The data come from the RNA Mapping Database (RMDB), library OK2TRN.
Structure probing data (DMS) for a 177-nucleotide construct.

[RMDB]
RNA sequence: GGGAACGACUCGAGUAGAGUCGAAAAAAAAGGCCACAAUUGCCUCGGUUACCUUGUAUGCCCUCACCGCUCAGCCCCUGGGUCUGGCUUACGACAGGACAGCUCCAGGGGAGUCAAGGUCACAGGCUGGGAGUACGGUAUUCGUACCGUACUCCCAAAAAGAAACAACAACAACAAC
Reactivity to DMS in 0.01 (KOAc 150mM, MgCl2 10mM, bicine 150mM(pH8.5), 24C), signal-to-noise 1, nucleotides 027 to 126: a020a020a080a060g000g030c050c070a060c180a050a030u000u000g010c000c010u000c050g000g000u010u000a060c010c010u040u040g000u000a010u000g000c010c040c030u000c150a080c050c090g040c000u000c080a110g000c000c000c000c020u000g000g000g000u000c010u000g000g000c080u000u010a090c260g000a110c270a040g010g000a000c000a000g000c010u000c000c000a040g000g000g000g000a010g000u010c070a020a060g000g000u000c130a130c270a080g000g000c060